[RMDB]
RNA sequence: GGGAACGACUCGAGUAGAGUCGAAAAUUCGGUCCUAUGGAGCGGACCGUAUGCUCCGUCAGGAUGUGGAGGUAUCGCGCCCUCCUGUGCGCGUAUGUACAUCGAUACGGUUAUGUCGCCUUUGUGUCGGCGUUUGACACUUACACAUACCGGAUAAAAUUAUGAGGUGGUUCGCCACCUCAUAAUUAAAAGAAACAACAACAACAAC
Reactivity to DMS in 0.01 (KOAc 150mM, MgCl2 10mM, bicine 150mM(pH8.5), 24C), signal-to-noise 1, nucleotides 027 to 156: u010u000c040g020g030u000c000c000u000a300u010g010g030a220g000c300g000g030a080c060c060g050u000a030u000g010c000u010c010c010g010u020c040a060g010g000a050u000g020u010g020g000a060g050g040u000a040u010c020g030c040g000c000c020c020u000c040c030u000g020u010g030c040g000c060g060u000a040u000g060u000a100c060a130u010c120g010a190u000a010c040g040g000u020u000a070u000g020u000c050g050c030c070u000u000u010g040u000g000u000c010g040g040c130g020u000u010u030g010a020c030a010c010u000u020a050c010a040c000a020u000a040c000c000g000g000a060u000a040a110
Reactivity to 2A3 in 0.01 (KOAc 150mM, MgCl2 10mM, bicine 150mM(pH8.5), 24C), signal-to-noise 2, nucleotides 027 to 156: u020u020c000g000g000u000c020c000u080a160u170g170g080a070g080c060g010g030a010c020c000g000u000a030u080g060c030u000c020c030g060u060c040a020g010g000a040u030g010u050g010g040a050g010g060u020a020u100c000g010c000g000c030c000c000u060c000c040u040g010u070g000c010g000c000g020u050a040u080g070u030a010c040a200u110c200g020a080u070a070c030g080g070u080u060a040u060g100u130c010g000c030c050u080u080u120g150u070g020u050c020g040g110c020g030u040u040u050g000a010c020a020c000u030u080a050c020a000c010a020u110a140c000c020g040g000a040u100a090a150